Source: RMDB library M2PK50, as collected in RNAgym. Structure probing data (DMS) for a 177-nucleotide construct. For DMS, 862 sequencing reads were counted. Values cover nucleotides 27 to 126. For DMS the reverse transcriptase was MarathonRT.

RNA sequence: GGGAACGACUCGAGUAGAGUCGAAAAGGUCUGAUCUUCGGAUCAGACCAACUCAGAUUCCCAAUAGCUGCGUAUCUUGGCUAAGACGGAUAGGCGUUGCCACUCAGGGGGGUUUCGACCCCCCUAACUGUGGGAUUGAGUUCGCUCAAUCCCACAGAAAAGAAACAACAACAACAAC
Reactivity to DMS in 0.01 (KOAc 150mM, MgCl2 10mM, bicine 150mM(pH8.5), 24C), signal-to-noise 1, nucleotides 027 to 126: g020g000u000c000u000g010a010u000c000u000u040c200g020g000a040u000c000a020g000a000c010c020a000a030c170u010c110a060g000a240u000u000c020c000c010a200a170u010a080g000c030u020g030c120g040u010a080u000c080u020u000g070g030c040u000a080a100g010a080c100g020g000a100u000a080g020g010c030g000u010u000g010c060c080a080c110u000c120a080g000g000g030g000g020g000u000u000u000c130g000a000c000c000c000c000c010c010u030a000a040